[RMDB]
RNA sequence: GGGAACGACUCGAGUAGAGUCGAAAAACAAAAUUCACGUGAGACUUCCAAAUGAUUUGCCUCAAAAUUUUUCAAAGUGUCGUCGUAAAAACUGUCUAGUAAAUACUAAUAGUAUGUCGUAGACCUAGUAAUCCUCAUUCUUCGGAAUGAGGAUUACAAAAGAAACAACAACAACAAC
Reactivity to DMS in 0.01 (KOAc 150mM, MgCl2 10mM, bicine 150mM(pH8.5), 24C), signal-to-noise 1, nucleotides 027 to 126: a100c060a070a090a060a080u010u000c080a060c050g020u020g020a080g000a020c040u000u000c080c090a090a070a080u020g010a120u010u000u010g000c060c040u030c050a040a020a050a050u000u010u010u020u030c070a060a060a080g000u010g000u000c020g020u010c020g030u020a060a060a050a110a050c140u020g000u000c050u000a040g020u000a030a070a030u000a040c020u010a110a090u000a100g060u000a020u010g020u000c100g020u000a030g020a110c030c220u010a090
Reactivity to 2A3 in 0.01 (KOAc 150mM, MgCl2 10mM, bicine 150mM(pH8.5), 24C), signal-to-noise 1, nucleotides 027 to 126: a000c060a000a040a060a080u110u120c120a020c070g070u130g030a090g060a050c000u050u000c070c070a000a070a090u050g070a070u140u010u040g050c030c020u180c000a000a060a160a200u120u140u000u110u140c010a080a000a040g070u050g000u020c010g010u000c010g040u080a000a000a140a000a140c000u020g000u080c020u000a030g000u030a100a260a060u030a070c020u060a010a120u020a080g080u030a050u120g020u020c010g030u010a000g010a000c010c010u010a030